The record gives the reactivity of an RNA of 207 nucleotides to 2A3 and DMS. The DMS profile rests on 3,919 reads. For DMS the reverse transcriptase was MarathonRT. In probing experiments dimethyl sulfate is read out at A N1 and C N3, which are open when not base-paired. It was measured as part of the RMDB library M2RFPK.

RNA sequence: GGGAACGACUCGAGUAGAGUCGAAAACUCCCCUCAAAAUCGUUUCAGUUCAAAAUUGAUUCGGCGGCCCUGUCAUGAGGCCGAAACGAAGGCACGUACCCCUUCGAAUGGCGUCGGGGAGUCAGCGAAAGCACUGACCCUUUCGAGGGUCAGUGAAUAUAUGUAAAAGUUUCGACUUUUACAUAUAAAAAGAAACAACAACAACAAC
Reactivity to 2A3 in 0.01 (KOAc 150mM, MgCl2 10mM, bicine 150mM(pH8.5), 24C), signal-to-noise 2, nucleotides 027 to 156: c020u030c000c010c000c000u050c060a250a270a140a190u100c010g010u000u000u000c020a090g000u140u070c080a160a190a200a170u030u060g020a030u020u020c000g080g000c000g000g000c080c000c000u060g060u100c010a070u060g030a040g050g020c000c000g050a020a000a010c010g000a000a000g000g000c120a010c240g190u270a120c020c010c010c010u000u000c000g030a040a030u040g010g010c080g060u140c080g040g000g000g030a020g020u020c030a000g030c030g100a110a030a030g070c000a000c020u010g010a000c000c000c000u020u020u040c130g090a010g000g000g000u000c000a000g000u000g000a000a000
Reactivity to DMS in 0.01 (KOAc 150mM, MgCl2 10mM, bicine 150mM(pH8.5), 24C), signal-to-noise 2, nucleotides 027 to 156: c040u000c000c000c000c030u020c040a030a090a120a090u000c030g020u000u000u000c010a120g000u000u000c150a110a070a180a090u010u000g000a040u010u000c020g000g040c040g000g000c000c000c000u010g040u000c180a110u000g000a050g010g030c000c010g000a030a080a140c030g000a020a010g010g010c080a110c080g020u000a170c080c050c010c020u010u010c020g020a090a120u020g020g050c020g020u010c090g030g000g030g010a060g020u000c100a080g000c040g000a120a060a160g010c000a000c000u010g000a020c000c000c010u000u000u000c160g030a000g030g030g020u000c000a000g010u000g000a010a090